[RMDB]
RNA sequence: GGGAACGACUCGAGUAGAGUCGAAAAACGCGUGGGCUACGGCCGACGCGAAGAUUUGCAUAUAGUGUAGUAUGCAACUAAAAAUAAAGAAAUACACGUCAAGAACAGUCCGGUACGCCGGACUGAAAAAAGGACUCUUUCUUCGGAAAGAGUCCAACCAGUACUUAACGUUCGCGUUAAGUACUGGAAAAGAAACAACAACAACAAC
Reactivity to 2A3 in 0.01 (KOAc 150mM, MgCl2 10mM, bicine 150mM(pH8.5), 24C), signal-to-noise 2, nucleotides 027 to 156: a000c010g030c000g000u030g060g020g020c020u050a050c170g120g010c000c070g030a000c000g000c010g000a050a010g050a070u020u010u010g000c010a010u010a000u010a100g000u000g000u000a010g000u000a000u010g020c000a000a000c040u200a050a020a010a050a070u170a040a060a040g110a040a120a000u010a000c000a000c000g150u130c200a170a040g040a160a070c000a000g000u000c000c000g040g000u040a040c230g060c030c000g000g000a000c000u000g020a000a010a000a000a000a000g000g000a000c000u000c010u000u000u000c010u030u070c160g090g000a000a000a000g000a000g010u000c000c010a000a000

The record gives the reactivity of an RNA of 207 nucleotides to 2A3. It was measured as part of the RMDB library M2RFPK.